[RMDB]
RNA sequence: GGGAACGACUCGAGUAGAGUCGAAAAAACGCUAUGUCGGGUCUGGGUGACACGCUGCAGAUGCUUGGCAGCGGACUGGUCGACAUCCUAAACAAGUCCCUGGAGUUCUUCUCCGACCCACAGAAGAUCCAGUCCUUCAAAGCGGAGCUCGAUGGUCACGUUGGGUAGUUUUCGAACUACCCAACGUAAAAGAAACAACAACAACAAC
Reactivity to 2A3 in 0.01 (KOAc 150mM, MgCl2 10mM, bicine 150mM(pH8.5), 24C), signal-to-noise 1, nucleotides 027 to 156: a000a000c050g000c100u050a050u100g060u100c050g000g050g000u000c020u000g010g000g000u110g040a030c020a020c130g010c010u010g000c000a090g020a170u120g140c180u080u110g150g000c000a000g000c000g010g010a020c000u010g020g000u010c030g010a010c010a110u010c030c000u200a160a090a020c040a080a040g060u040c050c000c070u090g000g000a000g090u020u070c010u090u000c000u050c000c020g030a040c030c060c020a040c040a030g030a000a050g000a000u070c000c070a010g020u000c010c010u060u120c070a090a050a020g010c040g020g010a000g010c040u030c040g050a050u060g030g030u050c060
This 207-nucleotide RNA was probed chemically with 2A3.
The reactions ran in a buffer of 150 mM KOAc, 10 mM MgCl2 and 150 mM bicine (pH 8.5), at 24 C.